[RMDB]
RNA sequence: GGGAACGACUCGAGUAGAGUCGAAAACAACGCUGUAUGUAUAGUAAGCGAUAACCUGUUGAUUAUUGAAUCUUUCGGGGAGAUGGCUUAUAACAUUUCUUACCUGACCAGGGUACCGGGAACCAACAUAGCUAUCAUUAUUCGUAAUGAUAGCUAUAAAAGAAACAACAACAACAAC
Reactivity to DMS in 0.01 (KOAc 150mM, MgCl2 10mM, bicine 150mM(pH8.5), 24C), signal-to-noise 7, nucleotides 027 to 126: c170a100a110c080g020c030u010g000u020a040u010g000u020a080u020a150g010u000a050a030g010c010g000a070u020a090a170c040c010u010g000u000u000g000a070u010u000a170u040u030g010a040a090u000c010u010u010u010c020g010g010g000g000a070g010a060u000g000g010c060u000u010a040u020a090a080c060a050u000u000u020c040u010u020a120c030c020u010g000a110c070c090a060g000g000g000u000a090c040c040g020g000g000a070a090c100c100a050a080c220
Reactivity to 2A3 in 0.01 (KOAc 150mM, MgCl2 10mM, bicine 150mM(pH8.5), 24C), signal-to-noise 9, nucleotides 027 to 126: c040a030a020c050g030c080u090g050u220a070u050g080u040a100u110a210g070u030a030a000g000c050g030a030u030a040a060c010c010u020g020u050u030g040a090u010u090a080u100u210g220a080a020u020c000u020u060u090c030g000g000g010g000a140g030a070u020g090g000c010u040u020a030u030a120a020c010a040u060u130u060c030u050u070a080c000c010u060g070a140c010c040a030g030g000g030u020a060c000c030g040g010g040a030a020c030c010a010a050c030
Record summary: Structure probing data (DMS and 2A3) for a 177-nucleotide construct. For 2A3 the reverse transcriptase was SuperScript II with manganese. For DMS, 21,083 sequencing reads were counted.